[RMDB]
RNA sequence: GGGAACGACUCGAGUAGAGUCGAAAAGUCGGGAGCACUAGAUGGUCUGGCUGCACGGGUGCCUGAAAGACUGAUGAUCUACGUGAGAUAUGUCACAUCGCCUAGACUCUAGAGACACCAUCCACACCCUUUCUGAUAAAUUCGUUUAUCAGAAAGGAAAAGAAACAACAACAACAAC
Reactivity to DMS in 0.01 (KOAc 150mM, MgCl2 10mM, bicine 150mM(pH8.5), 24C), signal-to-noise 9, nucleotides 027 to 126: g020u000c040g010g010g010a070g010c050a080c050u000a060g010a090u000g010g010u000c050u000g010g010c040u000g020c070a050c080g000g010g010u000g010c040c030u000g010a100a090a090g000a060c060u010g010a090u010g010a100u000c030u010a070c130g010u010g010a060g010a110u010a060u010g010u000c050a040c110a070u000c060g010c050c020u000a070g000a120c030u000c030u000a070g000a130g000a090c060a090c080c050a070u000c030c040a090c150a140c210
Reactivity to 2A3 in 0.01 (KOAc 150mM, MgCl2 10mM, bicine 150mM(pH8.5), 24C), signal-to-noise 9, nucleotides 027 to 126: g040u030c030g020g020g020a040g020c060a030c110u030a030g020a130u060g030g050u010c020u020g030g010c020u030g010c020a020c040g030g000g040u060g040c000c020u050g060a110a060a030g070a040c060u050g030a090u080g020a030u020c010u070a100c070g040u070g060a060g010a080u150a080u180g050u020c000a020c010a060u040c040g000c010c010u020a030g010a060c000u000c010u040a070g000a000g010a120c010a020c040c010a030u030c030c010a070c010a040c040
Source: RMDB library OK2TST, as collected in RNAgym. Structure probing data (DMS and 2A3) for a 177-nucleotide construct. Reactivities are given for positions 27 through 126. 2A3 adducts were read by reverse transcription with SuperScript II with manganese.